[RMDB]
RNA sequence: GGGAACGACUCGAGUAGAGUCGAAAAAAUAUCCGGGCUGCGCGUGCGGGCGCAGGACAGAAUCAUCGAGUUGUUUGAACACCCAACGAUAGUCAACGUUUCCUCGCACUUUGUGUAUACCCCGUCCGACCUCAUUGGAGUUCGCUCCAAUGAGGUCAAAAGAAACAACAACAACAAC
Reactivity to DMS in 0.01 (KOAc 150mM, MgCl2 10mM, bicine 150mM(pH8.5), 24C), signal-to-noise 2, nucleotides 027 to 126: a030a060u000a080u030c080c000g000g010g020c000u010g010c020g020c000g060u040g010c100g000g020g010c020g020c050a020g020g030a020c100a160g000a050a120u010c050a130u010c050g000a050g000u010u020g000u010u000u000g050a060a040c130a100c060c000c060a110a110c070g020a090u020a100g000u050c100a120a080c100g000u000u000u000c010c000u000c010g040c010a050c030u000u010u010g000u030g000u000a100u010a080c000c000c000c070g040u120c150c110
Reactivity to 2A3 in 0.01 (KOAc 150mM, MgCl2 10mM, bicine 150mM(pH8.5), 24C), signal-to-noise 2, nucleotides 027 to 126: a030a000u210a090u040c030c020g090g060g000c050u080g020c000g010c020g000u190g050c040g040g060g000c020g000c020a000g000g000a010c040a010g090a080a100u140c010a080u100c100g010a010g050u000u080g080u010u030u200g000a000a040c020a060c030c020c000a010a040c000g050a060u140a060g120u090c030a000a060c040g000u000u050u070c000c020u030c000g000c000a080c040u010u040u070g050u000g040u000a060u070a100c000c000c000c000g060u120c030c010